[RMDB]
RNA sequence: GGGAACGACUCGAGUAGAGUCGAAAAAAACAAAACGGUAGCAAUGAGAACGAGAGAAGGAAAGAGAAGGAGGAAACCAAGGCUUGGAUAGGUACGGUUGACUAAUACCCAAUUUGCUCCGCGACAGCGGCUUGUGCACGUUCGCGUGCACAAGCCGAAAAGAAACAACAACAACAAC
Reactivity to DMS in 0.01 (KOAc 150mM, MgCl2 10mM, bicine 150mM(pH8.5), 24C), signal-to-noise 1, nucleotides 027 to 126: a060a100a070c140a030a020a050a080c050g000g000u000a110g000c120a110a020u010g030a040g020a060a020c140g000a060g000a000g020a050a070g040g000a070a060a020g000a020g020a090a040g020g000a030g000g020a090a070a050c140c030a080a180g000g040c020u000u020g000g000a020u000a010g000g020u020a050c260g020g010u000u000g010a040c110u010a050a060u000a060c050c020c050a040a260u020u000u010g000c050u010c010c030g050c090g020a060c170a100g040